Structure probing data (2A3 and DMS) for a 207-nucleotide construct. For 2A3, 2,166 sequencing reads were counted. DMS adducts were read by reverse transcription with MarathonRT.

RNA sequence: GGGAACGACUCGAGUAGAGUCGAAAAUGAUCUAUGACUGCAGCAAGCUUUUCCCAAUCUUUUAUAGUGAAUUUCAUAAAGGAAGCUUCAUUUUUGGGAGAAGAGUCCAAUGCUGUUAUAAAGCCCUGUUCCUAAGAGGGCAGGAAAUCAGUCAGCAUGCAUAAAUACUAUUCGUAGUAUUUAUGCAAAAAGAAACAACAACAACAAC
Reactivity to 2A3 in 0.01 (KOAc 150mM, MgCl2 10mM, bicine 150mM(pH8.5), 24C), signal-to-noise 3, nucleotides 027 to 156: u110g020a020u080c030u090a090u070g020a030c010u010g010c000a000g000c000a000a040g000c010u000u020u000u010c000c000c000a020a030u040c070u090u230u070u120a180u170a130g020u010g040a060a070u060u100u090c050a040u160a200a100a000g120g010a020a030g030c010u070u010c030a050u030u080u030u040u020g010g000g010a020g000a040a020g000a040g090u030c050c010a050a050u010g000c000u000g030u060u020a100u050a070a050a010g000c000c000c000u020g010u080u180c030c000u100a160a050g170a220g080g010g010c010a000g010g000a010a060a030u100c000a000g010u000c000a010g030c050a050
Reactivity to DMS in 0.01 (KOAc 150mM, MgCl2 10mM, bicine 150mM(pH8.5), 24C), signal-to-noise 3, nucleotides 027 to 156: u000g010a100u000c020u000a090u000g010a090c030u010g000c000a080g020c030a100a160g000c020u000u000u000u000c000c000c010a070a100u000c060u000u000u010u000a120u010a130g030u000g010a090a130u010u000u010c030a080u000a120a130a200g020g000a040a130g000c130u000u000c040a100u010u010u000u010u000g030g010g000a050g010a030a060g000a120g010u000c090c020a070a150u000g020c010u000g000u000u000a110u000a080a150a200g000c100c000c010u010g000u020u000c000c020u010a120a170g000a090g000g000g040c010a020g010g000a060a060a090u000c000a080g010u000c000a050g020c100a240